[RMDB]
RNA sequence: GGGAACGACUCGAGUAGAGUCGAAAAGAUAUGGAAUGGGUAUGGAGAUGGUCGGAAACGAUGCAUCGUUGAAAUACAUAUUCCUAAGUCAAACACUAAUUGGGGACUUCGGUCCCCAAUUAGUGAAUCUUUUACAAUUCUUCGGAAUUGUAAAAGAAAAAGAAACAACAACAACAAC
Reactivity to DMS in 0.01 (KOAc 150mM, MgCl2 10mM, bicine 150mM(pH8.5), 24C), signal-to-noise 2, nucleotides 027 to 126: g010a030u000a300u000g000g000a000a010u010g010g000g020u010a010u010g000g010a100g010a020u000g010g020u000c000g000g010a110a070a210c010g000a000u000g010c020a000u010c000g020u000u020g000a120a140a020u000a000c010a040u010a040u000u000c000c000u010a070a150g000u000c030a100a120a230c000a000c000u020a010a010u000u010g000g000g010g010a010c010u000u000c280g040g000u010c000c000c000c000a000a030u000u000a000g010u000g010a030a060